The record gives the reactivity of an RNA of 177 nucleotides to 2A3.
RNA sequence: GGGAACGACUCGAGUAGAGUCGAAAAACAUACUGGGUAGUAGAUUUUGGGAGUCACGGUCUCUACUAUCUAGUAUGAGCACUACAUGUAGACUAGACUGUGAUUCCCAAAGUCUACAUGUGGUGUAGUAUCUGGAUGUAUUCGUACAUUCAGAUACAAAAGAAACAACAACAACAAC
Reactivity to 2A3 in 0.01 (KOAc 150mM, MgCl2 10mM, bicine 150mM(pH8.5), 24C), signal-to-noise 2, nucleotides 027 to 126: a000c050a010u140a040c040u100g040g060g030u090a100g000u000a010g020a040u020u010u000u010g010g000g010a020g030u040c020a010c030g010g000u000c010u000c000u020a010c020u030a020u030c040u000a020g010u000a080u120g010a030g070c080a010c000u020a010c010a000u030g000u000a010g050a080c140u050a040g010a010c000u050g020u030g020a050u020u040c000c000c000a000a000a020g000u000c000u000a000c000a000u010g000u070g000g040u130g000u120a250

Conditions: 150 mM KOAc, 10 mM MgCl2 and 150 mM bicine (pH 8.5), 24 C.